Structure probing data (DMS and 2A3) for a 207-nucleotide construct. It was measured as part of the RMDB library M2RFPK. The reactions ran in a buffer of 150 mM KOAc, 10 mM MgCl2 and 150 mM bicine (pH 8.5), at 24 C. The 2A3 profile rests on 3,322 reads. For DMS, 2,758 sequencing reads were counted.
[RMDB]
RNA sequence: GGGAACGACUCGAGUAGAGUCGAAAAUACCGUCUUCUCCCCGACGGUUUCAAUCCAUAGCUUCACGUUGUGUAGCGUAGGUGGAAGGUAUCGUGUGGUGUAUAAACACCACAUAGUCUCUCAGGGGUCAAGCUGAUAAACUUCGGUUUAUCAGCAACCUAUGUCGAUCCUUCGGGAUCGACAUAGGAAAAGAAACAACAACAACAAC
Reactivity to DMS in 0.01 (KOAc 150mM, MgCl2 10mM, bicine 150mM(pH8.5), 24C), signal-to-noise 1, nucleotides 027 to 156: u020a080c000c000g040u000c010u000u000c080u010c020c010c040c150g030a030c050g040g020u000u000u000c040a110a100u000c000c040a120u000a170g020c000u000u000c020a050c000g000u000u000g030u000g010u000a030g000c030g020u010a050g050g000u000g000g000a080a010g040g000u000a070u000c050g010u000g020u000g000g040u010g020u010a150u040a140a180a090c020a000c000c000a000c000a000u000a020g000u000c070u000c010u000c020a170g010g020g000g010u000c050a050a190g010c000u000g020a020u000a000a010a030c010u000u000c240g010g030u000u000u000a000u000c010a010g010c020a000a020
Reactivity to 2A3 in 0.01 (KOAc 150mM, MgCl2 10mM, bicine 150mM(pH8.5), 24C), signal-to-noise 4, nucleotides 027 to 156: u070a000c000c000g000u000c020u250u010c040u090c000c000c000c000g010a000c020g010g040u010u020u050c050a030a060u020c010c010a050u050a140g000c000u050u040c020a030c060g300u300u270g020u100g030u080a020g020c040g080u120a070g000g100u010g020g020a070a040g070g010u120a070u170c070g010u000g000u000g010g020u010g060u020a110u100a300a250a030c000a000c000c010a000c000a000u000a000g010u000c000u000c000u010c090a030g000g020g020g000u050c050a060a030g010c000u000g000a000u000a010a000a010c000u030u060c190g100g000u000u000u000a000u000c000a000g000c000a000a000